[RMDB]
RNA sequence: GGGAACGACUCGAGUAGAGUCGAAAAUCGCGCUCUCUGCACCCUCCGAUCUCUCUCUUCUAUCGCAUGCGCAGGAGCGGAUACCCACUUGUACGUCUUCCUCCCGGAUAACCUCCACCGACUCUGUUAUCUAAUUGGGAUUCGUCCCAAUUAGAUAAAAAGAAACAACAACAACAAC
Reactivity to 2A3 in 0.01 (KOAc 150mM, MgCl2 10mM, bicine 150mM(pH8.5), 24C), signal-to-noise 9, nucleotides 027 to 126: u040c020g000c000g000c160u000c000u010c010u030g010c020a060c020c020c010u030c040c020g090a140u020c030u000c000u000c000u010c020u160u030c030u090a080u060c030g030c100a050u110g040c040g000c060a010g020g020a010g010c010g010g000a020u090a090c000c010c000a020c020u030u090g060u100a040c040g030u010c010u030u010c000c010u020c000c000c010g010g010a030u040a080a050c010c010u030c010c000a040c010c020g050a050c020u010c020u060g030u050
Reactivity to DMS in 0.01 (KOAc 150mM, MgCl2 10mM, bicine 150mM(pH8.5), 24C), signal-to-noise 6, nucleotides 027 to 126: u010c030g000c040g010c020u000c020u010c020u000g020c030a180c070c060c050u000c120c030g010a070u000c030u010c040u010c030u010c030u010u010c080u000a070u010c060g010c120a080u010g020c090g010c030a050g010g010a040g010c020g000g000a040u010a150c010c000c010a110c150u020u010g010u010a050c060g000u000c030u000u000c020c000u000c020c010c000g010g000a100u010a070a090c060c020u000c020c020a070c080c030g010a070c070u000c030u010g010u000